RNA sequence: GGGAACGACUCGAGUAGAGUCGAAAACAAAGAGAGCCUGGGUGACUGUGUAGGGGUAUUAGGCUAUGCCCAGCACCACAUCUGGUUGUCAUUCAGGGGAGCAGCUAGGGCUGGAACUGCUGGGGAGUGCAAACUGCAGUAUUCCCUGUUCCCUUGAUAAUAUCCAUAGUUUCGACUAUGGAUAUUAAAAAGAAACAACAACAACAAC
Reactivity to 2A3 in 0.01 (KOAc 150mM, MgCl2 10mM, bicine 150mM(pH8.5), 24C), signal-to-noise 5, nucleotides 027 to 156: c050a010a190a010g080a010g010a010g020c020c030u050g000g040g000u040g050a150c070u060g020u020g060u130a110g020g050g010g010u040a090u100u160a080g080g000c040u050a020u090g020c000c010c010a000g020c020a010c030c010a040c010a100u080c050u090g090g000u050u050g050u030c060a100u090u030c010a030g020g000g020g000a010g000c010a000g020c040u120a070g050g060g010c040u030g010g020a040a030c030u030g000c030u070g020g030g020g020a050g040u140g040c030a100a090a050c040u060g010c010a000g010u030a120u050u070c010c000c000u000g000u010u010c010c010c000u010u000g000a000
Reactivity to DMS in 0.01 (KOAc 150mM, MgCl2 10mM, bicine 150mM(pH8.5), 24C), signal-to-noise 4, nucleotides 027 to 156: c050a080a100a130g010a160g000a120g010c030c020u000g020g020g030u000g000a050c060u000g020u000g020u000a120g020g020g020g000u000a040u000u010a050g000g010c070u000a080u000g030c000c010c010a140g020c030a070c010c050a080c030a060u000c040u000g010g030u000u010g010u000c030a140u010u000c030a040g010g020g010g010a080g020c000a030g000c040u000a070g010g000g000c020u010g020g000a050a050c030u000g000c020u010g030g020g010g010a070g040u010g000c080a100a070a110c070u010g020c040a130g010u000a110u010u000c010c010c010u000g010u000u000c000c000c010u000u010g010a170